RNA sequence: GGGAACGACUCGAGUAGAGUCGAAAAGGUUAUGUUCUUGCUACCAUUAUUGUGUUUCUGUGUGCUGUACUGAUGUAUUUGUGUUUACCUACAUUUUCUAUGGCACCUGUUGAAUUUUAUGAAGACCCAUAUAUGCAUCGUUCGCGAUGCAUAUAUGAAAAGAAACAACAACAACAAC
Reactivity to 2A3 in 0.01 (KOAc 150mM, MgCl2 10mM, bicine 150mM(pH8.5), 24C), signal-to-noise 4, nucleotides 027 to 126: g080g000u110u050a070u140g050u030u040c010u040u060g040c030u050a050c010c010a070u090u100a120u090u260g060u010g040u060u040u050c040u020g100u010g000u000g070c010u000g000u020a010c020u020g020a030u010g030u020a050u050u150u050g100u000g080u090u210u110a060c010c010u010a000c010a010u070u030u000u000c040u020a040u000g000g000c000a000c000c010u020g080u020u030g030a060a070u030u010u110u190a100u170g050a030a020g020a020c010c010
Reactivity to DMS in 0.01 (KOAc 150mM, MgCl2 10mM, bicine 150mM(pH8.5), 24C), signal-to-noise 6, nucleotides 027 to 126: g010g000u000u000a050u000g010u010u010c040u000u000g010c090u010a150c050c030a110u010u010a090u010u010g010u000g010u000u000u000c020u000g000u010g020u000g000c010u000g020u000a020c090u000g000a020u000g000u000a040u000u000u010g030u000g030u010u000u020a070c110c200u000a020c030a020u010u000u000u000c140u000a020u000g000g010c020a020c010c030u000g000u010u000g010a050a050u000u010u000u000a090u010g000a110a120g010a110c090c090
Source: RMDB library 15KREP, as collected in RNAgym.
The record gives the reactivity of an RNA of 177 nucleotides to 2A3 and DMS.
The RNA was probed in 150 mM KOAc, 10 mM MgCl2 and 150 mM bicine (pH 8.5) at 24 C.
For DMS, 11,409 sequencing reads were counted.
As a SHAPE reagent, 2A3 marks flexible, mostly unpaired nucleotides at the ribose 2'-OH.